Annotation
The record gives the reactivity of an RNA of 177 nucleotides to DMS and 2A3. The RNA was probed in 150 mM KOAc, 10 mM MgCl2 and 150 mM bicine (pH 8.5) at 24 C. It was measured as part of the RMDB library OK1LIB. The DMS profile rests on 1,625 reads. For 2A3 the reverse transcriptase was SuperScript II with manganese. DMS adducts were read by reverse transcription with MarathonRT.

RNA sequence: GGGAACGACUCGAGUAGAGUCGAAAAACAAUGGGUGAUUACCGUGCACCUUGAGUGAAUGUCAAGGCAGGAAGGGUUCCAGGGCCACCCAGUGUGGCAGGAGCAGAGCUGGGAUCAGAAUUAAAAAGCGUUGACCUCUCUUCGGAGAGGUCGACGCAAAAGAAACAACAACAACAAC
Reactivity to DMS in 0.01 (KOAc 150mM, MgCl2 10mM, bicine 150mM(pH8.5), 24C), signal-to-noise 2, nucleotides 027 to 126: a070c200a040a020u000g010g010g000u000g030a100u020u030a040c120c090g000u020g030c040a260c010c010u000u040g000a170g020u010g020a100a130u060g000u000c000a000a000g000g030c190a130g000g030a130a030g040g000g000u000u000c020c070a110g010g000g010c040c000a050c000c020c110a100g040u010g030u000g020g000c030a100g000g000a050g010c060a070g000a070g000c040u020g010g020g040a000u000c060a010g010a030a240u030u040a120a080a120a060a170
Reactivity to 2A3 in 0.01 (KOAc 150mM, MgCl2 10mM, bicine 150mM(pH8.5), 24C), signal-to-noise 2, nucleotides 027 to 126: a010c040a020a160u150g040g110g000u090g010a120u150u110a210c000c000g070u090g000c010a040c040c000u000u020g010a020g030u070g050a060a100u090g000u020c020a070a000g000g050c100a040g040g040a040a120g060g000g020u030u020c000c000a070g040g190g000c020c000a010c020c000c000a000g000u120g010u030g220g000c090a050g020g020a060g010c100a040g040a000g090c000u060g030g010g000a000u060c020a030g120a100a000u100u100a170a050a050a060a020